[RMDB]
RNA sequence: GGGAACGACUCGAGUAGAGUCGAAAAAUUUCAUUGUUUGCAUUAGGUGCGUUAAUCUUUGGUCCGCAAUUAUUAAUUGGUGUAUCAUUGACUGGUUUUGUUCCUAAAAAUGCCAUCAGUGUAGCAACGCUAAAACACGAUUCGUCGUGUUUUAGCGAAAAGAAACAACAACAACAAC
Reactivity to DMS in 0.01 (KOAc 150mM, MgCl2 10mM, bicine 150mM(pH8.5), 24C), signal-to-noise 2, nucleotides 027 to 126: a140u000u010u000c050a050u010u020g050u000u000u020g000c020a050u010u000a120g020g030u000g000c070g010u010u000a070a060u010c060u000u000u000g000g020u010c050c000g000c070a080a050u000u010a140u000u050a080a060u010u020g020g020u040g060u000a080u000c030a020u000u000g000a030c160u030g000g010u000u000u000u000g000u020u010c000c040u020a000a060a040a090a060u000g000c060c010a040u010c020a040g000u000g010u000a030g000c080a010a120
Reactivity to 2A3 in 0.01 (KOAc 150mM, MgCl2 10mM, bicine 150mM(pH8.5), 24C), signal-to-noise 4, nucleotides 027 to 126: a000u130u150u030c050a050u040u030g030u040u040u030g010c020a020u010u050a020g060g010u060g030c030g080u080u130a060a080u010c030u060u020u030g030g000u030c000c020g020c050a020a030u040u060a080u190u260a290a040u050u080g100g030u060g030u090a010u040c010a020u040u070g020a030c060u030g030g100u050u060u060u150g030u030u040c000c000u080a080a030a060a060a030u060g000c040c000a030u020c020a040g000u010g010u040a060g090c060a060a060

Structure probing data (DMS and 2A3) for a 177-nucleotide construct.
Reactivities are given for positions 27 through 126.
The reactions ran in a buffer of 150 mM KOAc, 10 mM MgCl2 and 150 mM bicine (pH 8.5), at 24 C.
The DMS profile rests on 4,072 reads.
The data come from the RNA Mapping Database (RMDB), library OK1LIB.
For DMS the reverse transcriptase was MarathonRT.
For 2A3, 2,824 sequencing reads were counted.
For 2A3 the reverse transcriptase was SuperScript II with manganese.